This 177-nucleotide RNA was probed chemically with DMS and 2A3. For DMS, 3,336 sequencing reads were counted. For 2A3, 2,096 sequencing reads were counted. 2A3 adducts were read by reverse transcription with SuperScript II with manganese. The reactions ran in a buffer of 150 mM KOAc, 10 mM MgCl2 and 150 mM bicine (pH 8.5), at 24 C. Source: RMDB library OK2TRN, as collected in RNAgym.
RNA sequence: GGGAACGACUCGAGUAGAGUCGAAAACACCACCGCCGUCUUUACAAAAAAAUUAGCCAGGCAUGGUGGUGGGACCACAGGGGCACAGGCUGAGGUCAGAGGAUUGCUCCAGCCCAGGAGUUCCAGGAUUUAUGGAAGUGUUCGCACUUCCAUAAAUAAAAGAAACAACAACAACAAC
Reactivity to DMS in 0.01 (KOAc 150mM, MgCl2 10mM, bicine 150mM(pH8.5), 24C), signal-to-noise 4, nucleotides 027 to 126: c050a060c010c000a030c020c000g010c020c000g010u010c030u010u000u000a100c120a000a000a050a090a060a120a160u010u000a030g010c100c030a120g010g000c020a050u000g020g010u000g010g000u000g000g010g000a120c020c010a080c120a090g010g020g000g020c050a070c120a130g000g010c020u000g010a050g010g010u000c120a080g010a110g000g010a100u010u010g010c030u000c040c010a040g010c020c000c030a190g000g000a080g010u000u000c020c030a140g010g000
Reactivity to 2A3 in 0.01 (KOAc 150mM, MgCl2 10mM, bicine 150mM(pH8.5), 24C), signal-to-noise 2, nucleotides 027 to 126: c000a000c000c000a010c030c000g000c010c010g060u030c030u140u240u210a090c160a030a200a000a050a030a060a100u160u070a030g040c050c040a040g010g000c060a050u210g000g000u030g000g010u000g000g020g010a000c000c000a000c020a060g050g000g010g060c010a020c020a100g040g060c030u020g010a030g030g060u010c010a020g040a030g220g060a080u070u230g000c000u010c030c000a010g000c010c000c010a040g050g040a050g010u030u010c000c000a040g120g010